[RMDB]
RNA sequence: GGGAACGACUCGAGUAGAGUCGAAAAUAACAAUCAUCACCACCGACAGGCGUUUUUUGGCACUCAUUUAGUGGCUCCGUUGCGGUAGAUAAGGCUCCAGCAAGUGCAAUAAUCGUUGCAGCGCACCCCUUAAUGUAGUUUUCGAACUACAUUAAGGAAAAGAAACAACAACAACAAC
Reactivity to 2A3 in 0.01 (KOAc 150mM, MgCl2 10mM, bicine 150mM(pH8.5), 24C), signal-to-noise 5, nucleotides 027 to 126: u080a010a020c040a030a070u090c020a020u030c020a030c030c010a010c020c040g060a030c050a040g040g060c040g040u040u020u010u040u160u110g070g000c020a020c030u040c010a070u070u060u110a070g020u050g070g000c010u010c020c020g040u030u070g020c020g000g030u010a020g010a030u100a040a060g030g000c020u000c030c010a000g010c030a080a060g060u020g030c020a020a060u110a110a050u100c050g030u030u030g000c030a020g030c020g010c020a070c010c020
Reactivity to DMS in 0.01 (KOAc 150mM, MgCl2 10mM, bicine 150mM(pH8.5), 24C), signal-to-noise 9, nucleotides 027 to 126: u010a090a090c100a090a080u000c060a050u000c050a080c030c020a070c040c040g000a080c150a080g000g010c080g020u000u010u000u010u000u010g020g010c030a050c040u010c110a080u010u010u010a050g030u000g010g000c030u000c050c030g020u000u000g010c050g000g000u000a050g000a100u010a060a100g010g000c030u000c020c030a070g010c090a060a080g010u000g000c020a040a040u010a090a080u010c130g010u000u000g010c030a060g010c080g020c100a110c090c070
Structure probing data (2A3 and DMS) for a 177-nucleotide construct. Source: RMDB library OK2TST, as collected in RNAgym. Conditions: 150 mM KOAc, 10 mM MgCl2 and 150 mM bicine (pH 8.5), 24 C. For 2A3, 10,371 sequencing reads were counted.